Structure probing data (2A3 and DMS) for a 177-nucleotide construct. For DMS, 1,504 sequencing reads were counted.

RNA sequence: GGGAACGACUCGAGUAGAGUCGAAAAUCCGAGUCAUCAAUGAGACACCACCCUUUGAAACUGGAGGAUCUAACCCUGAGCCGUGAAUCCGGCCAGAGGACCGUGUCAGCCGGUCAGUUUUACUGGGCUUCAAGUUAGUGUUCGCACUAACUUGAAGAAAAGAAACAACAACAACAAC
Reactivity to 2A3 in 0.01 (KOAc 150mM, MgCl2 10mM, bicine 150mM(pH8.5), 24C), signal-to-noise 1, nucleotides 027 to 126: u000c010c020g020a050g070u000c010a110u030c030a110a300u230g050a060g020a110c010a020c060c000a030c000c020c000u050u000u020g050a040a030a020c030u020g040g010a020g090g030a040u010c030u110a020a060c040c000c000u040g010a040g040c000c000g040u040g090a010a040u050c020c010g030g020c020c000a010g040a120g010g010a030c050c000g040u050g140u090c020a000g090c020c010g010g050u030c010a000g000u020u020u000u020a020c010u000g000g000g030
Reactivity to DMS in 0.01 (KOAc 150mM, MgCl2 10mM, bicine 150mM(pH8.5), 24C), signal-to-noise 3, nucleotides 027 to 126: u000c000c000g020a090g000u010c040a090u000c090a080a120u000g020a140g010a080c070a130c180c120a240c030c020c020u010u010u010g010a010a040a070c050u000g000g020a110g000g000a120u000c110u000a080a100c030c030c010u000g000a170g020c020c000g010u010g000a170a130u000c300c000g000g030c010c000a050g000a130g000g000a060c090c090g020u000g010u010c070a100g010c100c000g010g000u010c000a070g000u020u000u010u010a040c050u010g020g020g000
Notes
2A3 adducts were read by reverse transcription with SuperScript II with manganese. It was measured as part of the RMDB library RFMREP. The reactions ran in a buffer of 150 mM KOAc, 10 mM MgCl2 and 150 mM bicine (pH 8.5), at 24 C.